Chemical mapping of a 177-nucleotide RNA with DMS.
The DMS profile rests on 750 reads.
High DMS reactivity at an A or C suggests that its Watson-Crick edge is free.
RNA sequence: GGGAACGACUCGAGUAGAGUCGAAAAGCAACAACAAGGGCACUAAACCAUCAUGCUGGAACAACUGCGUGGCAUUGUUCAGGAAGUGAAUGCAGCGAAAGACCUGCAGUCAGCCCUGGAUAUCAUCCUGUGGGCAACGAUUCGUCGUUGCCCACAGAAAAGAAACAACAACAACAAC
Reactivity to DMS in 0.01 (KOAc 150mM, MgCl2 10mM, bicine 150mM(pH8.5), 24C), signal-to-noise 1, nucleotides 027 to 126: g030c060a050a030c050a060a070c110a090a090g010g020g010c010a110c060u000a050a100a150c110c010a090u010c080a040u000g000c030u010g000g000a110a010c070a060a060c150u000g010c020g030u000g030g020c070a110u000u000g020u000u000c000a030g000g000a050a060g000u000g000a020a120u000g010c030a020g020c050g030a070a120a180g000a200c220c000u040g000c010a010g000u000c070a080g000c010c010c000u010g010g000a050u010a100u040c130a110u000c050